[RMDB]
RNA sequence: GGGAACGACUCGAGUAGAGUCGAAAAACACCAUUGGUGUGUCUGUACGGAGGCCCAGGGUUUGUUAGUUAUGGCAACGUUCGUGUUGAUGUUAUUAACGCACCCAAUGAUAUCGUAGUGAUUGGUGCCACUGUAAGUUUUUCGAAACUUACAGUGGAAAAGAAACAACAACAACAAC
Reactivity to 2A3 in 0.01 (KOAc 150mM, MgCl2 10mM, bicine 150mM(pH8.5), 24C), signal-to-noise 3, nucleotides 027 to 126: a000c030a010c020c010a160u060u220g060g000u060g010u010g040u040c020u060g140u050a030c010g010g050a030g050g000c020c010c010a040g060g000g000u000u030u080g020u000u020a040g000u010u050a040u080g050g020c020a010a020c070g080u160u120c140g020u150g030u270u020g010a030u030g010u070u030a040u040u020a010a000c010g000c020a010c020c000c010a020a040u160g070a040u020a020u100c060g010u020a060g090u030g120a130u020u120g080g040u090g050
Reactivity to DMS in 0.01 (KOAc 150mM, MgCl2 10mM, bicine 150mM(pH8.5), 24C), signal-to-noise 7, nucleotides 027 to 126: a060c030a040c020c010a210u000u010g030g040u000g020u000g010u000c040u000g020u000a040c070g010g010a070g010g000c030c020c050a150g000g010g010u000u000u000g010u000u000a030g010u000u000a020u010g010g010c010a010a020c020g000u010u010c300g020u010g010u000u000g000a040u000g000u000u000a030u000u000a020a010c030g000c170a060c020c000c020a060a070u010g000a190u010a050u000c040g010u000a080g010u010g000a110u000u000g010g020u010g010
This 177-nucleotide RNA was probed chemically with 2A3 and DMS. For 2A3 the reverse transcriptase was SuperScript II with manganese. It was measured as part of the RMDB library OK2TST. Reactivities are given for positions 27 through 126.